[RMDB]
RNA sequence: GGGAACGACUCGAGUAGAGUCGAAAAAGCUGAUAUUUUGAAUGUCCACUACCUGGCAAGUACUGGACCAGCCACUUGCAUAUACAUUUUCUCAAUUAUUCCUCACAAAACCUGGAUGAGAUGGGUGCUAGCAUCUCCAUUUUGCUGAUGAAGGAAACAUGACUGGGAGUUUCGACUCCCAGUCAUGAAAAGAAACAACAACAACAAC
Reactivity to 2A3 in 0.01 (KOAc 150mM, MgCl2 10mM, bicine 150mM(pH8.5), 24C), signal-to-noise 2, nucleotides 027 to 156: a000g050c060u050g030a130u040a170u140u190u220u120g100a130a050u130g010u000c020c000a010c030u010a020c010c000u050g120g030c080a020a010g010u010a030c080u040g000g020a020c000c020a000g030c000c010a070c070u070u170g070c090a080u140a030u080a080c030a110u050u050u130u000c040u010c010a040a000u020u030a080u050u110c020c040u050c030a080c060a080a110a060a140c030c070u080g080g000a080u060g020a100g010a080u020g010g040g000u050g030c050u050a020g050c000a000u000c030u000c030c000a020u050u080u080u050g030c040u040g040a070u050g040a100a000g120g000a010a080a140

Source: RMDB library OK3TST, as collected in RNAgym. An RNA of 207 nucleotides, treated with 2A3 and read out base by base. 2A3 adducts were read by reverse transcription with SuperScript II with manganese.